An RNA of 177 nucleotides, treated with DMS and 2A3 and read out base by base.
Values cover nucleotides 27 to 126.
It was measured as part of the RMDB library OK1LIB.
[RMDB]
RNA sequence: GGGAACGACUCGAGUAGAGUCGAAAAAUGAGUGAUGGUAUUAUUGCAACAGACCGCCGUGGACGUAUUCGUAUCGUCAAUGAUAUGGCACUCAAGAUGCUUGGUAUGGCGAAAGAAGACAUCAUCGCUAGACAGACGAAUUCGUUCGUCUGUCUAGAAAAGAAACAACAACAACAAC
Reactivity to DMS in 0.01 (KOAc 150mM, MgCl2 10mM, bicine 150mM(pH8.5), 24C), signal-to-noise 6, nucleotides 027 to 126: a070u010g010a080g010u000g000a020u010g010g040u010a040u010u000a060u000u000g000c100a110a090c160a090g020a110c130c040g020c080c040g010u010g020g000a040c070g000u010a150u010u010c110g000u020a080u020c060g010u010c050a050a050u020g000a090u010a040u020g000g000c030a050c010u030c140a070a050g010a150u010g000c020u000u010g010g000u030a050u010g000g000c030g010a050a060a100g020a060a060g000a060c110a050u000c060a080u020c090g020
Reactivity to 2A3 in 0.01 (KOAc 150mM, MgCl2 10mM, bicine 150mM(pH8.5), 24C), signal-to-noise 8, nucleotides 027 to 126: a020u150g020a040g050u040g030a050u050g060g040u040a030u120u030a070u100u130g040c040a110a070c040a160g080a070c010c030g010c010c050g050u110g070g010a040c050g020u050a110u070u160c080g040u130a080u100c010g050u040c000a030a030u070g030a040u030a050u080g050g000c020a010c000u090c010a040a040g070a100u080g020c020u030u080g050g020u250a080u090g050g000c040g050a040a070a030g110a040a010g070a040c030a020u060c010a020u050c040g010
DMS adducts were read by reverse transcription with MarathonRT. The 2A3 profile rests on 8,193 reads. Conditions: 150 mM KOAc, 10 mM MgCl2 and 150 mM bicine (pH 8.5), 24 C.